RNA sequence: GGGAACGACUCGAGUAGAGUCGAAAACCCCCAAGUUUCGACUUGGGGGAAUUAAAAUCAGCGGUAAAUAAUUAGCUCGCGUUACCGCUGAACGCCAGCAUAGAGCAAUGCGCUUCGGCGCAUUGAAGUAUCUGUCCAGAUUCGUCUGGACAGAUACAAAAGAAACAACAACAACAAC
Reactivity to 2A3 in 0.01 (KOAc 150mM, MgCl2 10mM, bicine 150mM(pH8.5), 24C), signal-to-noise 2, nucleotides 027 to 126: c000c010c000c000c000a010a020g000u010u040u190c180g130a030c030u020u010g000g000g000g000g040a000a000u150u130a040a060a010a060u030c000a000g010c010g030g020u020a000a030a060u120a090a220u230u210a070g020c040u020c020g050c010g010u020u000a000c000c000g000c000u000g000a000a000c010g080c010c010a060g010c060a170u130a140g040a000g080c000a000a000u000g000c000g010c000u020u060c250g060g000c000g000c000a000u000u010g010a040a010
Reactivity to DMS in 0.01 (KOAc 150mM, MgCl2 10mM, bicine 150mM(pH8.5), 24C), signal-to-noise 2, nucleotides 027 to 126: c000c000c000c010c000a020a000g020u000u000u000c200g020a030c000u010u000g010g020g010g000g010a030a000u020u010a070a050a190a070u010c010a010g000c000g010g000u000a010a060a050u020a090a160u020u000a190g020c050u000c050g010c180g020u000u000a010c010c000g010c010u000g010a010a070c130g040c010c010a100g030c180a170u020a090g000a080g020c010a040a000u000g000c000g000c010u000u000c270g030g000c010g030c000a010u000u010g000a090a070